An RNA of 177 nucleotides, treated with 2A3 and DMS and read out base by base.
The data come from the RNA Mapping Database (RMDB), library OK2TRN.
The RNA was probed in 150 mM KOAc, 10 mM MgCl2 and 150 mM bicine (pH 8.5) at 24 C.
The 2A3 profile rests on 12,904 reads.
DMS adducts were read by reverse transcription with MarathonRT.

RNA sequence: GGGAACGACUCGAGUAGAGUCGAAAAUCAGACCACGUCAGGGAGAAGGAUGGGCUAUGGGCGGUGCUGGCGUGGCUUUCCAUCCUGGCCUACCGCAACGGCGCCAAGAAGGAGAACCUCGGCGACACACAUAUGCUAGUUUCGACUAGCAUAUGUGAAAAGAAACAACAACAACAAC
Reactivity to 2A3 in 0.01 (KOAc 150mM, MgCl2 10mM, bicine 150mM(pH8.5), 24C), signal-to-noise 6, nucleotides 027 to 126: u120c020a030g130a150c000c010a020c020g000u020c020a030g050g090g040a140g070a170a070g100g030a110u110g030g030g010c070u110a110u170g060g050g020c100g040g030u100g030c020u010g010g000c000g010u010g000g000c000u000u030u000c010c000a020u010c010c010u020g020g000c010c020u040a050c020c010g020c060a080a070c080g030g000c010g000c010c010a010a050g040a020a030g050g030a080g020a080a080c000c010u030c040g020g000c020g060a020c010a010
Reactivity to DMS in 0.01 (KOAc 150mM, MgCl2 10mM, bicine 150mM(pH8.5), 24C), signal-to-noise 8, nucleotides 027 to 126: u010c150a110g010a140c010c020a040c040g020u000c020a040g010g010g010a120g010a130a090g010g000a100u000g000g010g020c110u000a110u010g010g010g010c090g010g010u000g010c030u000g000g010c030g010u000g000g010c060u000u000u000c020c020a090u000c040c020u000g010g010c020c030u010a070c030c030g020c170a090a110c110g010g010c070g010c020c020a040a060g010a070a090g000g000a100g000a070a110c060c020u010c040g010g020c020g010a090c150a180